[RMDB]
RNA sequence: GGGAACGACUCGAGUAGAGUCGAAAAGAUAUGGACUGGCUCAAGCGCACUAUGGUGUCGGAAACGACACCACGAAUGAACUACGCUGUGCCAGUCCUAAGUCAAAAUCCUGGCUUCGGCCAGGAAAUCUAUCCAUCAGGUUCGCCUGAUGGAUAGAAAAAGAAACAACAACAACAAC
Reactivity to 2A3 in 0.01 (KOAc 150mM, MgCl2 10mM, bicine 150mM(pH8.5), 24C), signal-to-noise 2, nucleotides 027 to 126: g020a000u000a020u040g000g000a030c000u000g010g000c010u010c150a300a080g000c100g060c060a030c080u050a020u040g010g010u000g000u000c000g010g010a000a010a000c010g000a000c000a000c000c000a000c000g070a030a220u280g020a080a090c200u300a140c300g000c000u010g010u010g000c000c000a010g000u000c000c000u010a010a000g000u000c000a020a000a000a190u020c000c000u000g000g000c000u030u110c300g150g000c010c030a020g000g000a010a030a000
Reactivity to DMS in 0.01 (KOAc 150mM, MgCl2 10mM, bicine 150mM(pH8.5), 24C), signal-to-noise 3, nucleotides 027 to 126: g000a010u000a260u010g000g000a000c000u000g010g000c000u000c030a090a030g040c000g020c060a070c130u010a140u010g000g000u000g010u000c000g020g010a040a060a100c020g010a000c000a000c000c020a000c080g010a080a050u000g010a130a120c110u010a140c020g010c000u000g000u000g000c000c000a000g000u000c000c000u000a000a080g000u000c030a110a100a090a130u000c000c000u000g000g000c010u000u000c220g040g010c010c000a000g010g000a000a020a050